[RMDB]
RNA sequence: GGGAACGACUCGAGUAGAGUCGAAAACAGCGUGACUACUAUCGUAGAUCUUUUUUACGUUUUGGAGGACCAUGGAUUAGAAAUAAAAAGUCCUCCGGAUGCUCAAUCGGAGCUCGAGGUCGAUUCCGAGUUCGAGGUCGGCUCCGAGUUCGGGGUCCCAUAGGACGUUGUUCGCAACGUCCUAUGGAAAAGAAACAACAACAACAAC
Reactivity to 2A3 in 0.01 (KOAc 150mM, MgCl2 10mM, bicine 150mM(pH8.5), 24C), signal-to-noise 2, nucleotides 027 to 156: c030a020g040c050g030u050g020a030c020u070a010c020u040a150u300c070g060u040a030g100a290u080c100u120u210u080u050u110u110a030c000g040u030u030u040u230g000g000a000g000g020a000c040c050a080u120g050g010a080u190u170a230g140a060a200a080u210a020a140a040a020a010g000u000c000c010u000c010c000g010g020a040u050g030c000u020c090a050a110u050c080g060g010a010g040c040u060c010g020a020g050g160u020c020g000a040u190u080c040c030g000a070g060u140u230c040g040a020g040g130u010c000g010g020c000u000c160c000g000a000g020u010u020c000g000g010g000g000u030c020

An RNA of 207 nucleotides, treated with 2A3 and read out base by base.
Values cover nucleotides 27 to 156.
It was measured as part of the RMDB library OK3TST.
Conditions: 150 mM KOAc, 10 mM MgCl2 and 150 mM bicine (pH 8.5), 24 C.
2A3 is a SHAPE reagent: it acylates the 2'-hydroxyl of flexible nucleotides of all four kinds.